Chemical mapping of a 177-nucleotide RNA with 2A3. It was measured as part of the RMDB library OK1LIB. 2A3 is a SHAPE reagent: it acylates the 2'-hydroxyl of flexible nucleotides of all four kinds. For 2A3 the reverse transcriptase was SuperScript II with manganese. The RNA was probed in 150 mM KOAc, 10 mM MgCl2 and 150 mM bicine (pH 8.5) at 24 C.
[RMDB]
RNA sequence: GGGAACGACUCGAGUAGAGUCGAAAAUCAGUUUCAAACGAAGCUCGCGCCCUGCAAGUGCGGAUGCUUGCGGGAGACCAUUGAUCAACUGUCUGGUGCCCUGGCCAUCUGCAGCGACGACGUUGGAGCUAGGUGGGCAGUUCGCUGCCCACCUAGCAAAAGAAACAACAACAACAAC
Reactivity to 2A3 in 0.01 (KOAc 150mM, MgCl2 10mM, bicine 150mM(pH8.5), 24C), signal-to-noise 2, nucleotides 027 to 126: u150c040a020g040u060u020u000c240a200a210a020c090g090a110a000g030c000u000c010g100c010g050c000c000c000u020g050c040a010a010g070u110g080c050g010g120a110u220g080c020u050u090g010c080g050g000g060a070g000a010c000c000a090u050u180g010a030u070c060a130a050c060u140g090u090c010u000g040g050u130g020c030c060c010u050g190g000c000c000a030u000c000u080g000c000a030g000c040g100a060c000g000a050c010g000u020u090g020g070a010